[RMDB]
RNA sequence: GGGAACGACUCGAGUAGAGUCGAAAAAGCAUCUGACUAUCUUCUAUCACAGGGCCAGGUACUCAAAAUAUAUUUAUUGAAUACAGUUGAAUAUAUUCUGUGAUCAUCCCUGAUCAUGUUAAGUUCUAUUGGGUCCAUACUAUUUAGUAGCCUAACAAAUACUAUUAGUAUUCGUACUAAUAGUAUUAAAAGAAACAACAACAACAAC
Reactivity to DMS in 0.01 (KOAc 150mM, MgCl2 10mM, bicine 150mM(pH8.5), 24C), signal-to-noise 3, nucleotides 027 to 156: a080g000c000a030u000c020u000g010a040c010u000a070u000c030u000u000c060u000a180u010c090a110c070a090g010g010g010c030c040a040g030g020u010a060c030u000c040a030a040a050a050u000a030u000a030u000u000u010a060u020u010g010a180a180u010a170c040a130g010u010u020g030a020a020u000a030u000a020u000u000c020u000g020u000g000a070u010c060a110u000c050c030c020u000g010a060u000c060a050u010g010u000u010a040a160g010u000u010c040u000a100u000u010g000g010g040u010c020c050a140u000a000c040u000a170u000u000u010a050g010u000a100g000c040c020u000a040a070c060a060
Reactivity to 2A3 in 0.01 (KOAc 150mM, MgCl2 10mM, bicine 150mM(pH8.5), 24C), signal-to-noise 3, nucleotides 027 to 156: a000g040c040a040u070c070u110g050a080c020u070a090u130c050u150u060c040u110a150u180c060a040c020a080g010g030g000c060c050a030g000g040u040a090c030u020c040a040a060a020a010u030a020u020a020u000u040u020a120u070u110g030a070a050u300a200c040a060g060u090u050g050a020a000u030a000u000a010u090u020c030u050g030u020g030a010u010c000a030u050c020c000c030u030g010a070u070c030a010u040g040u070u080a100a100g020u010u030c050u050a070u070u130g010g000g000u040c030c000a030u050a060c040u070a150u150u240u070a020g010u050a010g020c050c060u140a050a020c030a030
Structure probing data (DMS and 2A3) for a 207-nucleotide construct. The data come from the RNA Mapping Database (RMDB), library OK3TST. Conditions: 150 mM KOAc, 10 mM MgCl2 and 150 mM bicine (pH 8.5), 24 C.